[RMDB]
RNA sequence: GGGAACGACUCGAGUAGAGUCGAAAACGGGGCAGGAAGGAGUUGAGCGCAAGGGCGAACUUCUCCACCGGGAGGGAAUCGAUGUCGGUGAUGAAGUUGAUACACUGGCCCACGGCAUGCACCCCCGGAUUCAAGGAUCUUUCGAGAUCCUUGAAUCAAAAGAAACAACAACAACAAC
Reactivity to DMS in 0.01 (KOAc 150mM, MgCl2 10mM, bicine 150mM(pH8.5), 24C), signal-to-noise 2, nucleotides 027 to 126: c080g010g000g010g020c090a060g010g000a080a080g000g000a060g010u000u020g000a140g010c080g030c060a140a110g010g000g020c030g000a030a060c020u000u000c010u000c100c010a040c050c020g000g000g000a090g030g020g000a110a070u010c110g000a130u000g010u000c000g000g030u010g020a080u000g000a080a040g040u000u000g000a130u010a080c180a100c060u000g000g020c030c040c010a100c100g010g010c020a010u010g010c100a150c080c000c010c020c050g020
Reactivity to 2A3 in 0.01 (KOAc 150mM, MgCl2 10mM, bicine 150mM(pH8.5), 24C), signal-to-noise 1, nucleotides 027 to 126: c020g010g010g000g030c080a050g080g070a120a040g030g010a070g040u050u150g080a030g060c090g050c050a050a100g060g000g040c000g040a030a000c000u070u000c010u060c070c010a020c010c000g020g040g030a090g070g020g070a050a060u180c130g070a030u100g120u300c000g000g030u030g000a040u050g000a020a010g020u070u010g020a040u090a190c090a000c110u060g070g000c000c010c000a020c030g000g000c050a010u070g040c020a070c010c010c000c000c000g000